[RMDB]
RNA sequence: GGGAACGACUCGAGUAGAGUCGAAAAUAGUAACGGCGAGUGAAGCGGGAAGAGCUCAAGCUUAAAAUCUCCGUGCAAGUUUUGCGCGGCGAAUUGUAGUCUAUAGAGGCGUGAUCAGUGUGGGCGCGAGAUGAAUAUCCUUCGGGAUAUUCAUCUCAAAAGAAACAACAACAACAAC
Reactivity to DMS in 0.01 (KOAc 150mM, MgCl2 10mM, bicine 150mM(pH8.5), 24C), signal-to-noise 2, nucleotides 027 to 126: u000a140g010u000a110a090c070g010g020c050g020a080g020u000g000a120a080g030c060g020g010g010a070a080g000a110g010c040u000c060a050a130g010c050u010u010a050a080a040a110u000c020u000c000c000g020u000g020c000a010a150g010u000u010u010u000g010c000g030c020g000g000c060g010a010a080u000u000g010u000a020g000u010c030u000a100u010a080g030a120g020g010c080g000u000g010a050u010c030a080g010u000g010u000g020g010g000c110g010c190
Reactivity to 2A3 in 0.01 (KOAc 150mM, MgCl2 10mM, bicine 150mM(pH8.5), 24C), signal-to-noise 1, nucleotides 027 to 126: u050a000g070u000a070a030c010g000g000c000g000a030g020u040g050a040a000g030c030g010g000g020a070a010g030a000g000c010u040c060a030a000g000c000u080u040a040a040a040a140u050c020u010c010c000g010u000g020c010a070a250g040u040u260u300u020g000c030g000c000g020g020c010g000a010a010u050u040g050u060a020g000u000c010u030a090u040a180g090a020g030g040c020g000u010g020a030u040c020a040g030u020g000u050g070g000g040c040g000c040